[RMDB]
RNA sequence: GGGAACGACUCGAGUAGAGUCGAAAAAUCAACUAACAUUUUCACAAACUACCUUCAACUAUGAUCCAGGACAGCAGUAGUAAUACGCUAACUGAUCUGGAUCAUACCUGCAGGCAGGACAACUUAACAUAAUAUACGUUUACUGAUCUGGACCUAAUAAAGCGCUAGUAUUCGUACUAGCGCUUUAAAAAGAAACAACAACAACAAC
Reactivity to 2A3 in 0.01 (KOAc 150mM, MgCl2 10mM, bicine 150mM(pH8.5), 24C), signal-to-noise 2, nucleotides 027 to 156: a000u030c050a010a080c000u190a220a030c110a120u100u070u110u150c090a090c050a040a130a020c050u050a030c010c020u020u020c030a070a020c030u010a010u030g000a000u010c030c000a000g080g080a070c000a010g050c000a000g030u010a000g000u020a040a100u150a160c160g000c020u050a050a030c030u020g030a090u110c000u000g030g000a010u000c000a000u000a020c000c010u020g030c000a000g000g010c010a010g030g070a140c000a000a040c030u140u030a020a020c020a120u070a230a000u120a040u050a050c070g030u000u030u030a050c010u000g000a030u000c050u080g030g030a060c040c010u070a050a020
Reactivity to DMS in 0.01 (KOAc 150mM, MgCl2 10mM, bicine 150mM(pH8.5), 24C), signal-to-noise 1, nucleotides 027 to 156: a080u000c040a130a200c090u010a100a060c040a160u010u000u000u010c100a070c160a020a130a110c040u000a020c020c010u000u000c000a100a030c040u000a000u000g000a020u000c000c020a020g000g020a100c010a020g060c060a090g040u010a040g030u000a090a180u000a100c090g000c060u000a100a010c010u000g000a080u000c010u010g000g000a000u010c000a010u000a000c080c040u000g000c110a060g010g050c000a040g000g010a070c080a040a070c090u000u000a080a080c050a060u040a100a100u000a110u010a120c070g010u000u000u000a130c030u000g010a060u010c040u000g000g000a110c070c070u010a130a230